[RMDB]
RNA sequence: GGGAACGACUCGAGUAGAGUCGAAAAGGGCUACACCUCGAGCCUGGCGGCAGCGUCGCUGCUGGACUUGGGGUUGCACCGGGCCACCGAUGUCGUCGGUGGCUAUCGUGCGCUGGCGGCCGGCGGCUCCUUCCAAACUGUUCGCAGUUUGGAAGGAAAAAGAAACAACAACAACAAC
Reactivity to 2A3 in 0.01 (KOAc 150mM, MgCl2 10mM, bicine 150mM(pH8.5), 24C), signal-to-noise 1, nucleotides 027 to 126: g080g010g000c020u090a030c040a030c050c010u000c020g010a030g010c010c000u010g000g000c030g020g000c000a080g100c030g300u300c200g000c000u020g030c010u010g030g030a000c000u000u020g040g000g000g000u030u050g000c020a050c050c060g000g040g000c000c000a010c000c000g040a040u080g200u300c180g000u000c000g090g000u010g020g000c000u000a020u050c010g000u040g040c010g020c050u030g050g020c030g000g030c000c050g010g000c020g030g060c050
Reactivity to DMS in 0.01 (KOAc 150mM, MgCl2 10mM, bicine 150mM(pH8.5), 24C), signal-to-noise 2, nucleotides 027 to 126: g000g010g010c020u000a100c130a090c010c000u000c010g010a010g020c000c000u000g020g020c000g000g020c000a200g030c260g000u010c190g010c000u000g010c020u000g010g010a010c010u000u000g000g000g000g010u000u000g020c030a050c040c040g000g000g010c000c000a010c000c020g030a080u010g010u000c190g010u000c010g000g020u000g020g020c000u010a010u000c100g000u000g020c020g000c050u000g010g010c020g000g000c000c030g010g020c050g020g000c080
Structure probing data (2A3 and DMS) for a 177-nucleotide construct. For 2A3 the reverse transcriptase was SuperScript II with manganese. The 2A3 profile rests on 1,486 reads. The data come from the RNA Mapping Database (RMDB), library OK2TRN. Values are in units of 0.01, from 0 to 300, in steps of 10.